[RMDB]
Source: RMDB library 15KLIB, as collected in RNAgym. This 170-nucleotide RNA was probed chemically with DMS and 2A3. For 2A3 the reverse transcriptase was SuperScript II with manganese. High DMS reactivity at an A or C suggests that its Watson-Crick edge is free. For DMS, 33,411 sequencing reads were counted. The 2A3 profile rests on 19,751 reads. DMS adducts were read by reverse transcription with MarathonRT. The RNA was probed in 150 mM KOAc, 10 mM MgCl2 and 150 mM bicine (pH 8.5) at 24 C.

RNA sequence: GGGAACGACUCGAGUAGAGUCGAAAAACCGAGGGGGGUUCGAACUCAAGAAGAGAAGAUUUUCGAGGAAAUACUCCCAAGAAGUUCCCGGAGGGAUCCAAGAGACGGACGACUUUCCCCCAUUGGUAAAGCUACUUGUUCGCAAGUAGCAAAAGAAACAACAACAACAAC
Reactivity to DMS in 0.01 (KOAc 150mM, MgCl2 10mM, bicine 150mM(pH8.5), 24C), signal-to-noise 8, nucleotides 027 to 129: a070c060c020g000a070g000g000g000g000g000g000u060u000c100g010a150a120c070u040c050a090a120g000a080a030g010a090g040a090a110g010a100u000u000u000u000c080g010a100g020g030a040a070a040u000a070c060u000c010c020c090a080a050g020a080a100g000u000u000c030c010c030g030g010a090g010g010g020a060u050c030c020a080a110g000a080g030a090c100g030g020a080c050g040a100c040u010u010u030c020c030c010c040c070a110u010u010g020g010u020a080a060a070
Reactivity to 2A3 in 0.01 (KOAc 150mM, MgCl2 10mM, bicine 150mM(pH8.5), 24C), signal-to-noise 7, nucleotides 027 to 129: a000c010c010g000a040g000g010g000g000g010g010u030u040c030g010a050a020c020u010c070a050a040g080a060a030g030a030g010a120a040g010a070u040u040u030u060c030g030a020g000g040a020a050a000u070a060c020u010c000c020c010a010a020g070a030a000g010u020u010c000c000c000g000g010a010g020g000g020a030u020c020c030a060a030g050a000g030a050c060g030g010a010c010g020a040c040u060u070u060c000c000c010c010c010a060u030u080g050g010u100a100a060a010